[RMDB]
RNA sequence: GGGAACGACUCGAGUAGAGUCGAAAAGCGUGCACGCUCAUCUACUUGGACAAUCUGCCGGCGGCAGGGUGCGCGGAGCUGCACGGGUGCCGCGUGUUGUCGUGGGAGGACGUGGUGGCGCUGGGCCGCACCUGGUGACGUUCGCGUUACCAGGUGCAAAAGAAACAACAACAACAAC
Reactivity to DMS in 0.01 (KOAc 150mM, MgCl2 10mM, bicine 150mM(pH8.5), 24C), signal-to-noise 4, nucleotides 027 to 126: g020c010g020u000g020c020a020c050g010c020u000c030a070u020c010u010a060c060u000u020g010g000a080c040a020a050u020c080u010g010c100c030g000g020c060g000g000c010a030g000g020g020u010g010c030g000c060g010g010a110g010c040u020g000c030a020c020g000g030g030u020g010c010c000g010c010g030u020g020u010u010g000u000c020g010u010g000g000g000a110g020g000a050c050g020u000g000g020u010g010g010c000g000c030u000g010g000g010c020c040
Reactivity to 2A3 in 0.01 (KOAc 150mM, MgCl2 10mM, bicine 150mM(pH8.5), 24C), signal-to-noise 9, nucleotides 027 to 126: g030c020g020u060g030c020a010c050g020c010u010c010a110u010c020u190a300c050u110u170g190g020a030c020a040a090u040c040u100g100c080c050g190g040c060g020g000c020a030g090g050g030u090g010c040g000c050g050g030a060g030c080u100g010c050a040c040g080g050g030u040g020c000c010g010c020g010u050g030u020u040g030u020c060g030u080g020g020g010a080g010g020a030c080g030u040g010g030u030g020g000c010g000c020u010g000g040g020c000c020